Conditions: 150 mM KOAc, 10 mM MgCl2 and 150 mM bicine (pH 8.5), 24 C. Structure probing data (2A3 and DMS) for a 177-nucleotide construct. DMS adducts were read by reverse transcription with MarathonRT. Reactivities are given for positions 27 through 126. Source: RMDB libraries RFM100 and RFMREP, as collected in RNAgym.

[RMDB]
RNA sequence: GGGAACGACUCGAGUAGAGUCGAAAAUAAUUAUUAGAAAGAUGUAUCUCCAGCUGUUGAUAUUAGAGGGGGAAGCCUUUCUCUUUCACCUCGCCUUUUUAAACACCUGAUACAGUUGGUCAUGAUUGACUUGUAAUCAAUUCGUUGAUUACAAGUCAAAAGAAACAACAACAACAAC
Reactivity to 2A3 in 0.01 (KOAc 150mM, MgCl2 10mM, bicine 150mM(pH8.5), 24C), signal-to-noise 6, nucleotides 027 to 126: u110a020a050u170u290a080u150u130a050g040a010a030a010g050a040u130g060u180a140u050c040u020c020c000a010g000c010u020g020u050u020g040a050u020a070u250u160a080g000a010g000g010g000g000g010a000a000g000c000c000u030u110u030c040u010c000u010u020u010c020a020c000c000u010c000g000c020c030u150u170u090u020u170a090a180a010c080a030c010c010u010g010a030u030a080c010a010g010u010u010g020g010u020c070a090u130g110a090u010u010
Reactivity to DMS in 0.01 (KOAc 150mM, MgCl2 10mM, bicine 150mM(pH8.5), 24C), signal-to-noise 2, nucleotides 027 to 126: u010a070a090u020u040a060u000u000a040g000a030a030a020g010a270u020g000u010a050u000c140u020c030c020a040g000c040u000g010u000u010g020a170u020a030u030u030a060g000a060g000g010g020g020g000a020a000g000c300c070u030u000u000c060u000c000u000u000u000c000a030c000c020u000c000g000c120c110u000u020u010u020u010a100a040a080c110a180c010c030u000g010a050u010a010c030a010g000u000u000g000g000u000c190a070u010g010a220u030u010